RNA sequence: GGGAACGACUCGAGUAGAGUCGAAAAGACCAGUUCCAUUGGUGCCUUUUGGUACUGUGGAUAGGGGUACGGUUUUCCACCGUACCGAAACCUAGCAGAGGGCCAGUCUGGUGCCAGCAGCUGCGGUAAUUCCAGCUCUGCGAGUUUGCUCCCAUAUCCGUUUGAUACAGUUCGCUGUAUCAAACGGAAAAGAAACAACAACAACAAC
Reactivity to 2A3 in 0.01 (KOAc 150mM, MgCl2 10mM, bicine 150mM(pH8.5), 24C), signal-to-noise 1, nucleotides 027 to 156: g080a060c010c070a010g020u080u050c080c000a030u090u100g020g000u010g010c000c000u050u120u250u260g000g000u020a030c000u040g030u060g160g020a150u050a010g010g050g000g000u000a000c000g010g010u040u040u220u100c060c070a020c000c000g000u000a010c000c000g030a040a010a030c000c020u040a020g040c000a010g040a140g150g040g000c000c000a020g120u100c070u040g000g000u000g010c000c000a020g030c040a020g030c030u060g030c060g050g020u000a030a030u060u030c010c050a080g000c000u000c000u020g020c020g000a000g010u030u120u300g050c020u020c010c010c000a030u060a060u010